[RMDB]
RNA sequence: GGGAACGACUCGAGUAGAGUCGAAAAAUGGCGAAUGCAUGGGGAACUACAUCUGUGUCGCGAGUUCGAUUCUCGCCAGGGCCUGGUCCUGUAGCUCAGUUGGUAGAGCAAGCUGUUCCACGGACACAAAAUCCAGCUAGGUUCGCCUAGCUGGAAAGAUGUAGGAUAAGUUCGCUUAUCCUACAUCAAAAGAAACAACAACAACAAC
Reactivity to DMS in 0.01 (KOAc 150mM, MgCl2 10mM, bicine 150mM(pH8.5), 24C), signal-to-noise 5, nucleotides 027 to 156: a100u010g000g000c020g030a090a050u000g020c050a090u010g020g010g020g010a090a100c030u000a040c040a060u010c030u000g030u000g020u010c070g000c010g020a050g010u000u000c080g010a300u000u010c010u000c010g030c010c040a120g010g020g000c040c060u010g020g000u030c010c030u000g020u000a070g010c010u000c020a090g000u000u000g000g010u000a090g000a060g020c020a080a080g010c010u000g010u000u000c020c010a110c020g020g020a120c110a090c060a040a040a080a160u000c000c000a010g000c000u000a010g010g020u000u000c300g000c010c010u000a000g020c000u000g010g000a000a010a030
Reactivity to 2A3 in 0.01 (KOAc 150mM, MgCl2 10mM, bicine 150mM(pH8.5), 24C), signal-to-noise 8, nucleotides 027 to 156: a000u080g030g000c020g070a100a040u100g020c060a060u070g010g000g000g040a050a060c020u080a030c070a080u050c030u040g050u030g050u130c050g000c020g010a000g000u030u100c040g020a060u070u030c000u000c000g010c010c010a020g010g020g000c020c130u110g040g030u030c010c000u030g030u040a020g000c010u010c040a060g020u100u090g090g050u100a030g010a010g040c010a010a020g020c020u040g030u060u010c030c020a050c070g040g020a030c030a000c020a120a120a000a020u000c000c000a000g000c000u000a000g020g000u030u020c070g070c030c000u000a000g000c000u000g000g000a000a000a000

An RNA of 207 nucleotides, treated with DMS and 2A3 and read out base by base.
The 2A3 profile rests on 13,678 reads.
It was measured as part of the RMDB library M2RFPK.